Conditions: 150 mM KOAc, 10 mM MgCl2 and 150 mM bicine (pH 8.5), 24 C. This 177-nucleotide RNA was probed chemically with DMS. The DMS profile rests on 954 reads.
RNA sequence: GGGAACGACUCGAGUAGAGUCGAAAACAUACUGUUGCUGCUGGAGGAAGUUCUAUUUUGUCAUGGAAAAACGGGUUAUUCAGAGUAGGCCCUGAUUCAGCAGCUGCUGAUCCAGGCCCUGCAGCCAGGAGUACCGAUUAUUCGUAAUCGGUACUCCAAAAGAAACAACAACAACAAC
Reactivity to DMS in 0.01 (KOAc 150mM, MgCl2 10mM, bicine 150mM(pH8.5), 24C), signal-to-noise 1, nucleotides 027 to 126: c190a110u010a070c110u000g010u000u000g010c000u030g000c010u000g000g000a100g000g000a160a090g000u000u000c040u000a040u000u000u020u000g030u010c120a100u000g040g000a070a040a020a100a080c180g010g010g000u000u000a060u010u000c050a160g000a100g010u000a010g020g000c160c010c020u000g010a110u000u000c030a000g010c020a230g010c150u000g000c010u000g000a040u000c060c020a040g010g000c150c020c060u000g000c100a080g010c050c040a140